[RMDB]
RNA sequence: GGGAACGACUCGAGUAGAGUCGAAAACCCUGUCAUGAGGCCGAAACGAAGGCACGUACCCCUUCGAAUGGCGUCGGGGAGUUAGCGGCUAUAUAUGCGCCUAAUGCUGGCAUCCGGGAACGAGCGUAUUAGACAGUAAUCUUCGGAUUACUGUCAAACAUCUACUUAGGUUCGCCUAAGUAGAUGUAAAAGAAACAACAACAACAAC
Reactivity to DMS in 0.01 (KOAc 150mM, MgCl2 10mM, bicine 150mM(pH8.5), 24C), signal-to-noise 3, nucleotides 027 to 156: c030c010c040u000g000u010c060a080u010g010a090g000g020c010c000g030a160a100a160c040g000a060a030g010g010c070a090c100g010u000a170c070c060c000c030u010u010c010g010a150a160u000g000g010c040g040u010c040g010g010g030g020a130g040u010u000a060g030c030g020g030c000u000a130u000a120u000a080u010g010c040g020c020c010u000a060a070u010g000c000u000g010g010c050a090u000c040c030g010g000g020a090a090c090g020a130g010c040g010u000a100u000u010a180g010a020c000a010g010u000a000a010u010c000u000u000c300g040g000a010u000u000a000c000u010g000u000c000a020a040
Reactivity to 2A3 in 0.01 (KOAc 150mM, MgCl2 10mM, bicine 150mM(pH8.5), 24C), signal-to-noise 5, nucleotides 027 to 156: c010c000c020u040g110u050c090a140u120g080a040g080g040c010c030g060a050a070a050c040g010a040a040g020g030c090a030c030g110u170a090c000c010c030c000u010u010c030g060a190a070u150g030g040c030g050u020c000g010g000g010g000a090g040u030u050a040g020c030g050g010c030u010a020u010a020u010a040u290g080c050g020c010c020u120a170a030u190g020c050u030g020g000c000a060u020c040c030g040g000g020a070a050c060g000a010g050c020g020u080a120u080u080a130g000a000c000a000g000u000a000a010u000c010u020u060c170g090g000a000u000u000a000c000u000g000u000c000a000a000